Background: Chemical mapping of a 177-nucleotide RNA with DMS. The data come from the RNA Mapping Database (RMDB), library OK2TRN. The reactions ran in a buffer of 150 mM KOAc, 10 mM MgCl2 and 150 mM bicine (pH 8.5), at 24 C.

RNA sequence: GGGAACGACUCGAGUAGAGUCGAAAAGAUGAGGGCGCAUAGCCGGGGGGGUCACUGCUGUUGUCCCCCACCCAGAUCUCCUGAGGGUCCGGCAGGAGGUGGCGGCUGCAGCUCUGAGGGGCCCCAGGAGCUCUCAGAUGUUCGCAUCUGAGAGCUCAAAAGAAACAACAACAACAAC
Reactivity to DMS in 0.01 (KOAc 150mM, MgCl2 10mM, bicine 150mM(pH8.5), 24C), signal-to-noise 1, nucleotides 027 to 126: g030a160u030g010a130g010g000g000c040g000c240a040u010a150g040c030c020g020g010g020g000g010g040g000u000c030a030c040u010g020c220u010g000u020u000g020u000c010c000c000c010c020a030c080c020c050a160g000a090u000c020u010c010c000u010g010a140g000g000g010u010c050c000g020g060c030a140g020g010a020g020g040u010g000g010c030g010g020c060u010g000c060a100g000c030u000c010u000g000a140g010g020g000g010c030c010c010c030a040g010